[RMDB]
RNA sequence: GGGAACGACUCGAGUAGAGUCGAAAAGAUAUGGAUCUACAAUAUCCUCCUUGGAUUUAUAGGUGAGGUACAUCGGAAACGAUGUAUGGAGCCUAUUGUCAGGAGUGAUAUUGUAGAUCCUAAGUCAGACAUAAUCUACGUUCGCGUAGAUUAUGUCAAAAGAAACAACAACAACAAC
Reactivity to DMS in 0.01 (KOAc 150mM, MgCl2 10mM, bicine 150mM(pH8.5), 24C), signal-to-noise 4, nucleotides 027 to 126: g000a060u000a300u010g000g000a000u000c000u000a010c000a010a000u000a000u000c000c000u000c000c000u000u000g020g020a050u000u010u000a000u000a030g000g010u000g000a300g000g000u000a010c010a000u000c000g010g000a160a130a240c000g010a020u000g020u000a000u000g010g010a300g010c000c000u000a000u000u000g010u000c000a030g000g010a030g020u030g010a010u000a000u000u000g010u000a000g000a000u000c000c000u000a010a060g010u000c030a180
Reactivity to 2A3 in 0.01 (KOAc 150mM, MgCl2 10mM, bicine 150mM(pH8.5), 24C), signal-to-noise 1, nucleotides 027 to 126: g060a030u080a060u200g000g000a010u000c000u020a010c000a010a010u010a000u030c010c020u020c020c020u100u270g300g030a090u300u300u100a030u060a010g040g000u100g060a080g000g190u000a000c000a000u020c000g000g050a090a030a100c030g000a000u000g000u010a010u040g040g040a010g000c000c010u000a000u000u000g000u010c010a010g010g000a020g020u060g000a000u000a010u000u000g000u000a000g010a000u010c000c010u000a010a010g010u010c040a020

An RNA of 177 nucleotides, treated with DMS and 2A3 and read out base by base. For DMS the reverse transcriptase was MarathonRT. Source: RMDB library TTRINS, as collected in RNAgym. Conditions: 150 mM KOAc, 10 mM MgCl2 and 150 mM bicine (pH 8.5), 24 C. The DMS profile rests on 4,241 reads. For 2A3, 7,391 sequencing reads were counted.